Source: RMDB libraries RFM100 and RFMREP, as collected in RNAgym.
Chemical mapping of a 177-nucleotide RNA with 2A3 and DMS.
Conditions: 150 mM KOAc, 10 mM MgCl2 and 150 mM bicine (pH 8.5), 24 C.
For DMS the reverse transcriptase was MarathonRT.
2A3 adducts were read by reverse transcription with SuperScript II with manganese.
RNA sequence: GGGAACGACUCGAGUAGAGUCGAAAAACGUAAGAGGUUUUUUUUUAUUUGUGUGUGAGCUCCUGCAAUUGAUCUUCCCCCUCGAUGACAUCCUCGUUCAUAGAACGUAUUUGAUUUAUGAGAUUAGUCGAAGUAUACUUUUCGAAGUAUACUUCGAAAAAGAAACAACAACAACAAC
Reactivity to 2A3 in 0.01 (KOAc 150mM, MgCl2 10mM, bicine 150mM(pH8.5), 24C), signal-to-noise 6, nucleotides 027 to 126: a000c030g030u100a090a050g040a170g100g080u090u010u010u010u010u000u000u040u040a200u050u130u080g040u020g010u000g010u020g050a020g020c010u030c030c000u030g010c020a070a130u050u100g040a070u050c020u020u020c000c010c000c000c000u010c030g040a060u070g050a020c010a020u020c000c020u010c000g030u030u020c020a060u080a160g050a040a010c010g040u060a130u030u070u070g110a090u010u060u110a130u130g110a070g020a100u070u110a030g070
Reactivity to DMS in 0.01 (KOAc 150mM, MgCl2 10mM, bicine 150mM(pH8.5), 24C), signal-to-noise 5, nucleotides 027 to 126: a070c060g010u030a070a090g000a140g010g010u010u000u000u000u020u010u020u030u000a050u010u010u010g010u010g020u010g010u000g000a100g010c030u000c030c000u000g000c060a040a080u010u010g010a050u010c060u000u010c020c010c010c030c000u000c040g010a060u020g010a110c180a060u000c030c040u010c040g000u010u000c020a100u030a090g010a030a060c040g010u010a070u010u020u010g000a060u000u000u000a050u010g000a090g000a080u010u010a070g010